[RMDB]
RNA sequence: GGGAACGACUCGAGUAGAGUCGAAAAAGGGCACGGAGUCGGUGCCAGAUCGUGCGGCUUCGGCGCCAGUUCGUGCGAGAGCUUCGCUCGCGAACUCUACGUGGAACGGCCGUCGCUCGUGGAUCGGCCGUCUUCCGGGUUCCUGCUCCCACGCGGCGCAACAAAAUGUGUUCGCACAUUUUGUUGCAAAAGAAACAACAACAACAAC
Reactivity to 2A3 in 0.01 (KOAc 150mM, MgCl2 10mM, bicine 150mM(pH8.5), 24C), signal-to-noise 2, nucleotides 027 to 156: a000g010g000g000c020a010c030g000g000a010g020u050c000g050g000u030g050c180c000a030g010a010u100c120g080u140g030c050g020g000c010u030u010c000g040g000c060g060c070c030a030g010u020u000c050g090u090g060c060g000a000g010a010g030c210u030u040c010g020c080u120c240g150c020g030a010a010c010u000c010u050a190c030g020u050g030g000a000a000c000g010g020c000c000g000u020c000g000c010u250c030g000u000g020g000a000u000c000g020g000c000c000g010u020c010u220u040c010c000g000g010g000u090u300c010c000u030g050c010u010c000c030c000a020c020g140c090g090g030c110